Structure probing data (2A3 and DMS) for a 177-nucleotide construct. It was measured as part of the RMDB library OK1LIB. The DMS profile rests on 11,612 reads. Conditions: 150 mM KOAc, 10 mM MgCl2 and 150 mM bicine (pH 8.5), 24 C.
RNA sequence: GGGAACGACUCGAGUAGAGUCGAAAAGAAAGUGCUGGCCCAUUAUGGCGUACGUGAGAGAUCGUACAUGAUGGAACGACUCUCGAGUUGGAACUGAAAAGUGACACUAAAUGUGUCGGAGCACGAAGGGUUUACAUUAGUUCGCUAAUGUAAACCCAAAAGAAACAACAACAACAAC
Reactivity to 2A3 in 0.01 (KOAc 150mM, MgCl2 10mM, bicine 150mM(pH8.5), 24C), signal-to-noise 4, nucleotides 027 to 126: g050a010a090a020g070u100g070c030u050g130g050c000c000c000a010u040u020a030u060g110g000c090g020u080a020c040g040u240g030a130g000a010g000a130u200c000g000u000a060c030a000u080g050a020u030g010g040a090a020c000g010a000c000u000c000u000c010g000a000g010u060u040g090g020a050a050c020u040g110a070a110a040a020g150u130g050a010c000a000c010u080a180a090a070u210g000u010g000u020c000g050g010a020g020c050a000c070g020a080a080
Reactivity to DMS in 0.01 (KOAc 150mM, MgCl2 10mM, bicine 150mM(pH8.5), 24C), signal-to-noise 5, nucleotides 027 to 126: g000a070a100a100g010u020g020c030u000g000g010c060c000c010a030u020u010a070u030g000g000c120g020u000a050c040g010u020g000a090g000a070g000a170u010c000g020u000a060c010a100u020g000a050u020g010g000a110a120c010g010a020c000u000c010u000c010g010a020g000u000u000g030g000a160a110c020u000g010a060a070a110a070g020u000g000a080c010a000c010u010a070a090a120u040g000u000g010u000c000g020g010a060g000c070a020c100g000a080a120